[RMDB]
RNA sequence: GGGAACGACUCGAGUAGAGUCGAAAACGGUGCUGAAGCCGGCGACAGUUGCCCGAGUCAGCCACUUUCAAAAUUUGUUGGUUAAGUAACUUAGUAGCUUAGCUUCGGAUUUUCGUAACAAAUUUGCUUGUUACGUCUCGUUCGCGAGACGUAACAAAAAAGAAACAACAACAACAAC
Reactivity to DMS in 0.01 (KOAc 150mM, MgCl2 10mM, bicine 150mM(pH8.5), 24C), signal-to-noise 1, nucleotides 027 to 126: c030g010g020u000g000c210u000g020a070a150g140c060c300g000g000c000g000a020c180a080g060u000u040g020c000c070c030g000a100g040u000c040a120g020c180c020a050c040u050u010u010c060a030a000a000a030u000u000u000g000u000u010g000g040u020u000a000a060g020u040a140a070c050u000u050a160g040u010a100g000c000u000u000a020g000c000u000u020c040g020g000a050u000u000u000u000c200g000u000a120a000c120a030a000a040u000u050u000g000c090
Reactivity to 2A3 in 0.01 (KOAc 150mM, MgCl2 10mM, bicine 150mM(pH8.5), 24C), signal-to-noise 2, nucleotides 027 to 126: c030g000g000u140g000c040u160g120a170a050g000c030c040g000g000c050g020a080c030a040g100u290u100g020c000c000c040g000a050g010u020c020a010g010c010c000a120c100u070u090u110c060a000a000a040a060u010u000u030g020u030u050g000g090u030u020a010a010g010u020a050a030c060u050u190a050g030u030a030g030c000u020u040a000g010c000u090u070c030g010g010a060u000u000u020u130c100g030u050a060a040c020a000a030a030u090u050u060g010c000